[RMDB]
RNA sequence: GGGAACGACUCGAGUAGAGUCGAAAACGGAACUAAACUCGUGGUUCCUGUGGUUCACACCUGACCUCCUGAGCAGAAAAGAAAAAAGAAGGCGGCUCGGAAGAGCGCUUCAGGGAUCCCCGGGGAAGAAUAUUGAGAUGUUCGCAUCUCAAUAUUCAAAAGAAACAACAACAACAAC
Reactivity to DMS in 0.01 (KOAc 150mM, MgCl2 10mM, bicine 150mM(pH8.5), 24C), signal-to-noise 1, nucleotides 027 to 126: c160g010g000a030a020c050u000a080a120a110c100u010c040g000u000g000g000u010u000c000c000u010g010u010g040g010u000u000c080a060c100a120c030c040u010g010a090c050c030u000c020c000u020g000a100g010c080a120g000a080a090a060a050g010a020a060a120a080a110a140g010a060a040g000g010c030g010g020c000u010c020g000g080a060a090g010a000g000c020g010c050u000u010c010a050g000g000g020a090u000c020c020c020c040g030g000g000g010a150a140
Reactivity to 2A3 in 0.01 (KOAc 150mM, MgCl2 10mM, bicine 150mM(pH8.5), 24C), signal-to-noise 1, nucleotides 027 to 126: c010g010g000a020a020c010u050a140a040a000c040u040c020g080u040g040g040u000u020c000c000u020g070u070g000g050u070u110c040a040c010a020c140c020u040g070a040c000c000u020c050c050u060g010a020g000c020a050g110a110a100a040a060g170a040a190a000a040a010a020g090a130a020g300g300c150g080g000c050u020c030g000g030a040a020g000a020g000c030g000c000u040u020c000a000g050g000g010a040u040c010c000c000c020g020g010g000g000a000a080